[RMDB]
RNA sequence: GGGAACGACUCGAGUAGAGUCGAAAAGCGGUAUGCUUCGGCAUACCGCAAAAAAGCGUACUACACCUGUGAACCGAACUACGAGGCUGAUCCCAAAUAGGAUCAGGCUCGCGAAACCAGGUGUAUCGCAAAAAAGGAGAAACUUCGGUUUCUCCAACAAUUAGUCUGUGUUCGCACAGACUAAUUGAAAAGAAACAACAACAACAAC
Reactivity to DMS in 0.01 (KOAc 150mM, MgCl2 10mM, bicine 150mM(pH8.5), 24C), signal-to-noise 1, nucleotides 027 to 156: g030c010g000g010u000a000u010g020c000u000u000c300g060g010c000a010u000a000c040c000g010c000a000a000a020a080a030a110g030c020g010u000a080c160u000a020c000a010c000c000u000g010u020g020a090a300c230c170g000a130a160c020u000a030c000g000a040g000g040c000u040g000a010u010c000c010c020a070a190a130u020a050g020g000a040u000c000a000g000g020c000u010c000g000c000g000a150a090a140c080c000a040g010g040u030g000u000a010u000c040g000c050a000a030a070a100a080a110g000g020a030g020a020a000a010c010u010u010c220g120g000u000u000u000c010u000c010c000a030a020
Reactivity to 2A3 in 0.01 (KOAc 150mM, MgCl2 10mM, bicine 150mM(pH8.5), 24C), signal-to-noise 1, nucleotides 027 to 156: g000c000g010g010u030a000u010g000c000u090u120c220g000g000c000a000u010a000c000c020g000c000a000a000a000a000a000a000g030c020g000u060a060c000u000a000c000a000c000c010u000g060u090g110a060a090c180c000g050a110a040c050u220a050c290g010a050g180g000c010u020g020a000u000c030c010c020a020a300a230u300a050g000g000a000u000c000a020g040g010c010u000c000g000c020g050a080a020a020c000c000a000g020g000u000g010u000a000u040c020g000c000a000a000a000a000a000a260g060g020a000g000a070a020a000c080u130u200c300g260g000u020u000u020c020u000c000c000a000a010

Structure probing data (DMS and 2A3) for a 207-nucleotide construct. The RNA was probed in 150 mM KOAc, 10 mM MgCl2 and 150 mM bicine (pH 8.5) at 24 C. For DMS, 2,458 sequencing reads were counted. For DMS the reverse transcriptase was MarathonRT.